Notes
Chemical mapping of a 177-nucleotide RNA with DMS.
[RMDB]
RNA sequence: GGGAACGACUCGAGUAGAGUCGAAAAUACACACCAAACCAGGUUGAUCUUUCAAAUACACGCGCAACUCAAACCCAAUUUGAGAAUUGGUACACUGGUGUGAAAGAAGAGUAUGGAGUCAGUGAGACGUGCAGUUUAGCUUCGGCUAAACUGCACGAAAAGAAACAACAACAACAAC
Reactivity to DMS in 0.01 (KOAc 150mM, MgCl2 10mM, bicine 150mM(pH8.5), 24C), signal-to-noise 1, nucleotides 027 to 126: u000a080c070a050c020a030c000c000a030a120a070c050c070a210g000g020u050u020g000a090u020c110u000u000u000c040a070a170a150u010a060c140a090c050g020c020g020c080a100a150c150u020c050a030a030a080c060c000c050a060a130u000u020u000g000a110g020a120a060u000u000g020g000u000a000c090a160c140u000g000g010u000g010u020g000a030a000a050g000a090a100g000a060g040u000a070u000g020g000a070g000u020c050a020g020u000g000a080g000a190
Notes: Source: RMDB library OK2TRN, as collected in RNAgym. For DMS, 627 sequencing reads were counted. DMS adducts were read by reverse transcription with MarathonRT.